[RMDB]
RNA sequence: GGGAACGACUCGAGUAGAGUCGAAAAGGGGUCAGUGUGGGCAAGAGGUAGAGAGUAGCUGAAGCCUCCACGGCGCAGAUACUCUACUCCCCACCUUGCCGUAACAUCACUGACGGAGGCACCCAAAGUAGGAUCUAUCUUCGGAUAGAUCCUACAACUUACCCUUCAGCUUCGGCUGAAGGGUAAGAAAAGAAACAACAACAACAAC
Reactivity to 2A3 in 0.01 (KOAc 150mM, MgCl2 10mM, bicine 150mM(pH8.5), 24C), signal-to-noise 2, nucleotides 027 to 156: g000g000g000g000u030c000a050g000u000g000u050g050g040g000c010a020a000g020a010g000g000u050a000g000a000g010a020g070u020a010g030c000u030g060a300a070g000c040c000u300c300c160a120c180g000g040c040g010c000a020g000a000u010a030c000u100c030u120a300c010u070c020c040c010c020a080c080c020u000u000g000c020c000g010u010a000a030c020a020u250c030a000c000u000g020a000c000g000g040a010g020g040c100a120c000c010c010a030a110a000g000u000a000g000g010a000u000c000u000a000u040c060u180u290c300g000g010a000u010a000g000a000u000c000c000u000a000c000a000a000

The record gives the reactivity of an RNA of 207 nucleotides to 2A3. The RNA was probed in 150 mM KOAc, 10 mM MgCl2 and 150 mM bicine (pH 8.5) at 24 C. Source: RMDB library RNAMAK, as collected in RNAgym. 2A3 adducts were read by reverse transcription with SuperScript II with manganese.